The record gives the reactivity of an RNA of 177 nucleotides to DMS and 2A3. DMS adducts were read by reverse transcription with MarathonRT. Values cover nucleotides 27 to 126.
RNA sequence: GGGAACGACUCGAGUAGAGUCGAAAAGGGUAGAUCUUCGGAUCUACCCAAAAGGAGCAACCAACGAAGGAAGUGCUAGCAUAACCGUGCAGGCUAGCACUAAAAGGUUCCGCUUCGGCGGAACCAAGUCAAUGAUUUGGUUCGCCAAAUCAUUGACAAAAGAAACAACAACAACAAC
Reactivity to DMS in 0.01 (KOAc 150mM, MgCl2 10mM, bicine 150mM(pH8.5), 24C), signal-to-noise 2, nucleotides 027 to 126: g010g020g010u000a000g000a020u000c030u000u040c250g010g000a000u000c000u000a000c000c000c000a000a000a040a050g000g020a040g010c040a090a090c050c030a050a040c090g020a170a140g010g000a170a050g020u000g000c000u000a010g010c010a070u010a070a100c100c060g010u000g020c100a130g010g040c000u000a020g010c010a040c000u000a000a030a060a130g010g020u000u000c000c000g000c000u000u000c180g030g060c000g010g000a000a000c000c000a000a030
Reactivity to 2A3 in 0.01 (KOAc 150mM, MgCl2 10mM, bicine 150mM(pH8.5), 24C), signal-to-noise 2, nucleotides 027 to 126: g040g010g000u020a000g000a010u050c030u080u080c260g030g000a000u000c000u000a000c000c000c000a000a000a010a000g070g000a090g000c020a020a040c010c010a010a090c080g130a090a010g130g070a090a040g010u010g000c020u010a020g000c020a050u070a200a110c050c100g120u140g110c060a030g040g050c010u020a000g000c010a000c000u010a010a000a000a020g020g040u000u000c010c000g010c000u030u020c150g070g020c000g020g000a000a000c000c000a020a000